[RMDB]
RNA sequence: GGGAACGACUCGAGUAGAGUCGAAAAUCCCUGCUUCGGCAGGGAAAAACCGGCUGAGUGUGCAGAUCACAGCCGUAAGAAUUUCUUCAAACCAAGGGGGUGACUCCUUGAACAAAGAGAAAUCACAUGAUCUUAAAGUAUCCCUUUCGAGGGAUACGACGGGUCUAUGGUUCGCCAUAGACCCGUCAAAAGAAACAACAACAACAAC
Reactivity to 2A3 in 0.01 (KOAc 150mM, MgCl2 10mM, bicine 150mM(pH8.5), 24C), signal-to-noise 1, nucleotides 027 to 156: u000c000c010c000u000g000c000u040u070c180g120g010c010a020g010g010g000a090a000a000a000a020c020c000g000g020c010u020g000a060g090u140g030u180g120c090a010g020a050u030c000a020c010a030g000c020c020g050u100a040a000g000a050a080u040u030u000c010u070u060c050a050a060a100c050c000a000a000g030g000g000g010g000u060g060a050c000u010c000c000u000u000g010a040a020c040a010a140a000g050a000g020a000a020a000u050c030a050c010a240u080g040a000u000c000u060u180a110a040a000g000u000a000u010c010c000c000u030u030u070c180g070a010g000g000g000a000u000a000c000